[RMDB]
RNA sequence: GGGAACGACUCGAGUAGAGUCGAAAAGACAGGUUACAUGGGACACUCUCCUGCAUAAAACCCUGAACUAAGAAGCACAAGCAGUUUCCACAGGCUGCAAUCAGGAUGAGUCGAACUGUGGACACUGGAUAUGUCCAGGGUUCGCCCUGGACAUAUCAAAAGAAACAACAACAACAAC
Reactivity to DMS in 0.01 (KOAc 150mM, MgCl2 10mM, bicine 150mM(pH8.5), 24C), signal-to-noise 5, nucleotides 027 to 126: g010a210c050a030g010g010u000u020a080c080a060u000g000g020g020a220c090a040c090u000c030u010c010c030u000g040c170a090u010a060a120a090a140c160c020c020u000g000a070a110c120u000a080a070g000a080a080g020c090a080c170a100a110g010c060a030g030u000u010u000c020c060a050c060a020g010g010c020u010g020c150a060a080u010c030a030g000g000a100u010g020a020g010u000c100g020a070a110c010u000g000u000g000g000a030c200a030c030u000g000
Reactivity to 2A3 in 0.01 (KOAc 150mM, MgCl2 10mM, bicine 150mM(pH8.5), 24C), signal-to-noise 3, nucleotides 027 to 126: g070a020c030a010g000g040u090u100a090c040a090u120g020g000g000a010c010a020c020u040c000u000c000c000u020g060c090a040u140a120a100a060a080c010c000c030u030g050a050a030c050u140a190a060g090a100a000g080c040a020c050a200a070g050c020a030g030u010u040u000c020c010a010c000a040g000g030c010u070g020c050a020a060u060c010a010g060g010a040u170g010a060g030u060c070g030a080a010c000u020g000u010g060g010a020c000a040c040u020g010